[RMDB]
RNA sequence: GGGAACGACUCGAGUAGAGUCGAAAAGAGUGCAGAGAGUGAGAAACGUUCCGGCGCUGUAGGAUGUGGCUGCGGCCGAUUAGGUAGAUGGUGGGGUAACGGCCCACCAUGCCGAUAAUCGGUACAGAUUACUAUGCUGAUUCGUCAGCAUAGUAAUAAAAGAAACAACAACAACAAC
Reactivity to DMS in 0.01 (KOAc 150mM, MgCl2 10mM, bicine 150mM(pH8.5), 24C), signal-to-noise 9, nucleotides 027 to 126: g010a090g020u010g010c050a050g000a090g010a080g010u010g010a080g000a070a080a140c080g000u010u010c020c020g010g020c060g010c040u000g010u000a060g010g010a070u010g010u010g000g000c020u000g010c060g000g010c010c000g000a010u000u000a100g000g010u000a120g000a040u000g010g000u000g000g000g000g000u000a080a100c300g000g000c000c000c000a010c000c000a000u000g010c000c010g010a110u010a020a010u000c000g000g000u000a060c110a080g000
Reactivity to 2A3 in 0.01 (KOAc 150mM, MgCl2 10mM, bicine 150mM(pH8.5), 24C), signal-to-noise 9, nucleotides 027 to 126: g040a000g020u110g010c050a010g050a010g020a030g090u090g030a090g080a080a110a020c040g020u070u030c020c010g030g010c030g000c030u040g020u060a050g020g070a070u080g050u060g090g000c030u040g020c030g060g000c000c000g000a000u000u010a010g000g010u020a040g020a100u010g000g000u000g000g000g000g000u010a010a000c010g050g000c000c000c000a000c000c000a000u010g010c000c000g020a050u150a010a020u000c000g000g000u010a020c010a000g070

The record gives the reactivity of an RNA of 177 nucleotides to DMS and 2A3. For DMS the reverse transcriptase was MarathonRT. The RNA was probed in 150 mM KOAc, 10 mM MgCl2 and 150 mM bicine (pH 8.5) at 24 C.